[RMDB]
RNA sequence: GGGAACGACUCGAGUAGAGUCGAAAAGAUAUGGAUUAAAUAUGCCCAAAGGUGACACGCUAGACGAUGUCGGAAACGACAUGAUCGUCUUGGACCGUGCACCUUUGGGCAUAUUUAAUCCUAAGUCCUUCGUAUAACAGUUCGCUGUUAUACGAAGAAAAGAAACAACAACAACAAC
Reactivity to DMS in 0.01 (KOAc 150mM, MgCl2 10mM, bicine 150mM(pH8.5), 24C), signal-to-noise 3, nucleotides 027 to 126: g000a100u010a300u000g000g000a020u000u000a010a010a000u000a010u000g000c010c000c000a000a010a010g010g020u000g000a130c000a000c010g020c050u000a020g010a000c000g000a040u000g020u000c000g000g010a130a100a260c000g020a010c010a180u020g030a140u000c000g010u010c000u000u010g030g000a070c300c050g000u000g000c000a000c000c000u000u000u000g000g000g000c010a010u000a000u000u000u000a010a000u000c000c000u000a020a110g010u010c050